[RMDB]
RNA sequence: GGGAACGACUCGAGUAGAGUCGAAAACUGGUAAGAAAGCAGGGAGUUUCUCCAAGGCCAAGAAGGGAUUAACAGGUACAGUGAAGGAAUCAUUCUUCUUUCUUGAAUAGCUCAUCUAUUUUGGCAAAUAAUUCUGCCCUUCUCCCCAUCUCUUAUCAGCCAUCUGUUUAUUCGUAAACAGAUGGCUAAAAGAAACAACAACAACAAC
Reactivity to 2A3 in 0.01 (KOAc 150mM, MgCl2 10mM, bicine 150mM(pH8.5), 24C), signal-to-noise 1, nucleotides 027 to 156: c020u050g010g010u040a030a060g020a110a040a000g040c120a050g040g060g010a030g020u030u110u050c030u000c030c000a010a050g060g000c050c010a030a000g000a010a010g090g000g030a010u090u060a100a050c010a010g080g000u060a030c000a050g070u030g120a010a020g040g000a020a030u020c030a150u140u140c050u020u040c000u020u040u040c000u000u020g020a040a000u030a020g020c030u030c140a150u050c060u110a130u120u050u010u030g000g000c000a030a070a070u100a060a110u300u020c030u040g040c000c000c010u060u000c010u040c000c010c020c000a060u030c040u000c000u030u060a020u090c000
An RNA of 207 nucleotides, treated with 2A3 and read out base by base.
Conditions: 150 mM KOAc, 10 mM MgCl2 and 150 mM bicine (pH 8.5), 24 C.
Source: RMDB library OK3TST, as collected in RNAgym.
As a SHAPE reagent, 2A3 marks flexible, mostly unpaired nucleotides at the ribose 2'-OH.